Chemical mapping of a 207-nucleotide RNA with DMS and 2A3.
RNA sequence: GGGAACGACUCGAGUAGAGUCGAAAAGAAAGAGAGUUAGACACGGUUGAUCUCACCCUUCGGGGGGGCUAUAGAGAUCACUGGAAGCACUACCGGACAACCGGAACAUUGCAGCAAUGCAGCCAAAAAAAUCCAAACAUCUUCGGAUGUUUGGAAACAUUAAGAAGGACUUCGGUCCUUCUUAAUGAAAAGAAACAACAACAACAAC
Reactivity to DMS in 0.01 (KOAc 150mM, MgCl2 10mM, bicine 150mM(pH8.5), 24C), signal-to-noise 1, nucleotides 027 to 156: g010a120a080a090g030a130g020a070g010u000u000a030g030a100c100a090c040g060g000u020u010g000a060u000c000u000c000a240c030c000c000u000u030c130g010g020g040g010g000g020g000c030u010a170u000a120g000a080g010a040u000c000a000c030u000g020g000a110a120g030c020a050c000u000a220c030c000g000g030a110c130a080a150c030c020g030g000a080a060c040a110u010u010g000c010a130g000c130a070a090u000g000c020a040g000c080c040a010a000a010a060a060a090a180u000c010c000a010a010a000c050a030u000c000u000u010c300g050g000a000u010g000u000u000u050g000g000a010a000a060
Reactivity to 2A3 in 0.01 (KOAc 150mM, MgCl2 10mM, bicine 150mM(pH8.5), 24C), signal-to-noise 2, nucleotides 027 to 156: g110a010a050a010g080a010g020a020g010u140u110a030g030a080c040a000c130g040g000u120u170g030a000u000c000u010c010a060c000c000c040u100u210c270g070g020g000g000g000g010g000c060u100a080u100a300g010a020g000a000u010c000a000c000u010g000g020a030a000g000c040a010c060u040a050c030c010g000g040a070c040a200a180c030c000g000g030a030a020c030a010u060u140g000c010a000g020c010a000a050u060g010c000a010g030c050c030a050a070a010a000a020a010a060u020c000c000a000a000a000c020a000u000c000u020u020c120g090g000a000u000g010u000u000u020g000g000a010a000a000
DMS adducts were read by reverse transcription with MarathonRT. The reactions ran in a buffer of 150 mM KOAc, 10 mM MgCl2 and 150 mM bicine (pH 8.5), at 24 C. The 2A3 profile rests on 1,407 reads. For 2A3 the reverse transcriptase was SuperScript II with manganese.